[RMDB]
RNA sequence: GGGAACGACUCGAGUAGAGUCGAAAAGAAGAGCAGGCAGAUAAUCUUGUGCAGUAUGCAUGCUCUUAACUCCACAGGAAGUAAGGCAGCAAAAGAAUAACUGCCACUGCACAAGUGGAGCCGCAGAAAUCGAUAGGUAUUUCGAUACCUAUCGAUUAAAAGAAACAACAACAACAAC
Reactivity to 2A3 in 0.01 (KOAc 150mM, MgCl2 10mM, bicine 150mM(pH8.5), 24C), signal-to-noise 9, nucleotides 027 to 126: g140a010a000g010a000g000c020a030g020g000c010a000g040a150u150a190a110u150c040u050u060g030u060g040c020a030g010u100a050u130g000c010a010u010g000c000u000c000u020u010a020a030c010u020c010c020a110c030a070g080g120a110a030g050u170a050a070g020g000c010a010g000c060a050a070a060a070g200a110a150u140a130a020c010u010g010c000c000a000c000u000g000c000a000c000a030a030g000u010g000g040a020g020c020c030g040c050a020g130a050
Reactivity to DMS in 0.01 (KOAc 150mM, MgCl2 10mM, bicine 150mM(pH8.5), 24C), signal-to-noise 9, nucleotides 027 to 126: g010a010a010g020a020g010c000a030g000g020c010a100g020a160u070a100a080u020c020u010u010g010u020g000c080a060g000u020a070u010g010c000a050u010g000c000u000c000u000u000a040a100c040u010c010c010a100c130a140g010g010a120a080g000u020a090a080g010g000c000a000g010c200a080a080a100a100g010a130a100u020a110a180c020u000g000c000c010a100c010u000g000c040a020c030a030a030g010u020g000g000a040g000c010c020g010c160a090g010a070
Source information:
Structure probing data (2A3 and DMS) for a 177-nucleotide construct. 2A3 adducts were read by reverse transcription with SuperScript II with manganese. Source: RMDB library OK1LIB, as collected in RNAgym.